[RMDB]
RNA sequence: GGGAACGACUCGAGUAGAGUCGAAAAUAUCGUUUGCCGUGGCCAACGAAUCUAACUCAACCUUUGGUGUGCUCGGGAUCGGCCUUUCCACGCUUGAAGUCACCUAUUCUGGAAAAGUCGCUAUUAAUAAUGAUGGUACGUUCGCGUACCAUCAUUAAAAAGAAACAACAACAACAAC
Reactivity to DMS in 0.01 (KOAc 150mM, MgCl2 10mM, bicine 150mM(pH8.5), 24C), signal-to-noise 3, nucleotides 027 to 126: u010a090u000c030g010u000u000u010g010c030c070g020u010g030g020c010c040a040a070c040g000a050a030u010c080u010a080a120c040u000c050a160a070c040c040u000u000u000g020g010u000g020u000g010c060u000c050g010g010g020a080u000c030g000g010c050c020u010u010u000c030c020a070c140g000c090u010u000g010a070a090g000u010c070a040c080c030u010a070u010u010c060u000g010g000a060a030a070a080g000u000c050g000c140u010a060u000u000a080a190
Reactivity to 2A3 in 0.01 (KOAc 150mM, MgCl2 10mM, bicine 150mM(pH8.5), 24C), signal-to-noise 1, nucleotides 027 to 126: u110a000u060c010g010u020u050u020g010c020c040g020u140g110g000c000c030a020a030c010g010a020a050u040c040u050a080a070c000u000c050a010a060c020c030u060u110u160g010g010u110g010u020g050c020u030c030g050g040g000a060u050c000g030g000c010c000u020u060u050c010c020a040c020g000c010u030u080g050a030a000g020u110c020a030c000c000u030a090u070u000c050u040g060g060a000a050a090a010g050u060c010g010c060u140a100u270u140a070a120
Structure probing data (DMS and 2A3) for a 177-nucleotide construct. 2A3 is a SHAPE reagent: it acylates the 2'-hydroxyl of flexible nucleotides of all four kinds. The 2A3 profile rests on 1,148 reads.